RNA sequence: GGGAACGACUCGAGUAGAGUCGAAAAUCUACGACGUCGCCGUCGAAUCGCCGCUGGAGCGCGCGCCCCUGCUGUCGCAGCGCAUCGCGAACAACGUGCUGCUCAAGCGCGAGGACACCCAGGCGGAAUAUGGGAGGAUGUUCGCAUCCUCCCAUAUAAAAGAAACAACAACAACAAC
Reactivity to 2A3 in 0.01 (KOAc 150mM, MgCl2 10mM, bicine 150mM(pH8.5), 24C), signal-to-noise 1, nucleotides 027 to 126: u090c000u010a110c080g040a020c000g050u100c050g010c050c000g030u000c000g000a030a070u030c010g090c100c070g000c050u050g010g060a040g010c040g000c000g000c000g000c020c030c000c010u090g070c070u140g090u150c050g010c060a060g050c060g000c070a090u100c070g020c010g050a070a030c050a030a090c030g030u020g050c020u080g000c000u000c030a020a020g020c000g000c010g000a020g000g000a000c040a070c030c030c000a000g010g010c030g040g080a030
Reactivity to DMS in 0.01 (KOAc 150mM, MgCl2 10mM, bicine 150mM(pH8.5), 24C), signal-to-noise 3, nucleotides 027 to 126: u010c020u010a110c070g040a080c050g010u000c000g010c120c070g010u010c010g020a240a120u000c040g010c090c070g020c010u010g000g000a030g020c010g010c040g000c000g000c030c010c070c080u010g030c050u010g000u010c120g010c060a100g000c080g030c030a070u000c150g000c030g000a040a040c140a170a140c030g000u000g000c010u010g000c000u010c040a080a030g020c010g000c000g000a020g000g000a160c150a050c040c160c070a180g000g000c010g030g000a070